[RMDB]
The record gives the reactivity of an RNA of 177 nucleotides to 2A3 and DMS. In probing experiments dimethyl sulfate is read out at A N1 and C N3, which are open when not base-paired.
RNA sequence: GGGAACGACUCGAGUAGAGUCGAAAAGCGCAAACCGUUCUGCAAUGUGUAAUUGGUGCUUGAUUAGCCAAGAUUCCAUAACUCACUACCCAGCUCUUAAGAUGGUUCAAACACAUCUUAGCCACUAGGCAUGAUAUAUGUUCGCAUAUAUCAUGCCAAAAGAAACAACAACAACAAC
Reactivity to 2A3 in 0.01 (KOAc 150mM, MgCl2 10mM, bicine 150mM(pH8.5), 24C), signal-to-noise 3, nucleotides 027 to 126: g050c030g010c050a080a010a050c050c040g020u080u030c030u050g030c020a050a090u100g060u010g030u140a060a100u040u040g040g000u030g040c020u070u040g040a110u080u130a020g060c020c000a030a020g020a110u090u000c010c000a020u020a070a060c010u000c030a030c010u030a040c000c010c000a010g040c020u000c030u110u030a010a010g000a010u010g010g000u080u050c070a080a120a010c080a020c000a120u000c000u000u010a010g060c040c010a070c070u060a060
Reactivity to DMS in 0.01 (KOAc 150mM, MgCl2 10mM, bicine 150mM(pH8.5), 24C), signal-to-noise 4, nucleotides 027 to 126: g000c060g000c090a040a080a090c070c030g000u020u000c020u000g010c070a070a050u000g010u010g010u000a060a070u000u010g010g020u000g010c040u010u000g010a110u000u000a120g050c050c020a040a100g000a140u010u000c060c020a030u010a050a130c090u000c080a070c050u000a120c040c010c010a140g000c060u000c100u010u000a020a030g000a030u010g000g000u010u000c270a060a110a100c270a070c010a010u000c000u000u000a040g000c090c050a030c140u000a080